[RMDB]
RNA sequence: GGGAACGACUCGAGUAGAGUCGAAAAUAUGUACUGCAUCAAGCCGUCCUCAGAGGUGAGGAAGGUGCUGUCAAGACUAGAAGCAUGUGUCCCUCUCUCCAUUGCAAGAUGGGACAUAGAGAGGAGAAAAGUGGCAGACAGAAGUCUUAGGUAUGUAGAGCACGAUUAUGUUCGCAUAAUCGUGCUCAAAAGAAACAACAACAACAAC
Reactivity to 2A3 in 0.01 (KOAc 150mM, MgCl2 10mM, bicine 150mM(pH8.5), 24C), signal-to-noise 1, nucleotides 027 to 156: u240a010u040g010u040a080c000u050g090c050a050u010c070a110a070g010c030c020g000u000c000c000u050c020a060g050a160g300g180u130g000a010g000g010a000a020g030g010u090g000c010u000g040u040c010a030a000g010a120c000u100a040g080a120a010g030c020a020u080g050u040g050u070c020c000c000u000c000u000c000u000c000c020a010u080u000g000c000a050a040g020a070u080g030g000g010a020c000a000u010a000g000a000g000a010g060g010a100g060a080a170a050a000g100u110g090g060c010a020g000a020c000a000g070a120a000g000u000c030u060u210a090g070g000u140a090u150g100u220a050
Overview: The record gives the reactivity of an RNA of 207 nucleotides to 2A3. The RNA was probed in 150 mM KOAc, 10 mM MgCl2 and 150 mM bicine (pH 8.5) at 24 C. 2A3 adducts were read by reverse transcription with SuperScript II with manganese. The 2A3 profile rests on 621 reads.